Structure probing data (2A3) for a 207-nucleotide construct. Conditions: 150 mM KOAc, 10 mM MgCl2 and 150 mM bicine (pH 8.5), 24 C. It was measured as part of the RMDB library OK3TST.
RNA sequence: GGGAACGACUCGAGUAGAGUCGAAAAGCAAGACAAAAAUUACUUUUCAUGUACAUGGGCUCCUCAAUAACAUUAACAGCUGACUUCUCAUCCCACAUCAUGAAGGCCAAAAGGCAAUGGGAUCAUAUAUUCAAAGUGCUAAAAGAAAAAACUGCCAGACCGUAUAGGUCUUCGGACCUAUACGGUCAAAAGAAACAACAACAACAAC
Reactivity to 2A3 in 0.01 (KOAc 150mM, MgCl2 10mM, bicine 150mM(pH8.5), 24C), signal-to-noise 1, nucleotides 027 to 156: g000c030a060a020g040a200c100a000a120a010a060a130u080u030a270c130u180u070u110u150c040a040u060g010u050a020c000a100u050g040g000g000c020u010c020c000u020c070a100a160u150a080a030c060a030u190u210a030a010c020a010g020c040u020g020a030c010u070u030c050u040c050a060u030c000c010c000a090c000a060u090c000a000u050g030a000a000g030g010c010c010a000a300a000a010g000g000c040a000a100u060g000g040g000a000u020c030a010u050a070u070a070u060u100c020a070a110a030g020u010g030c010u060a050a010a150a000g170a060a100a000a000a000a000c080u100g010c010c090a010
2A3 adducts were read by reverse transcription with SuperScript II with manganese.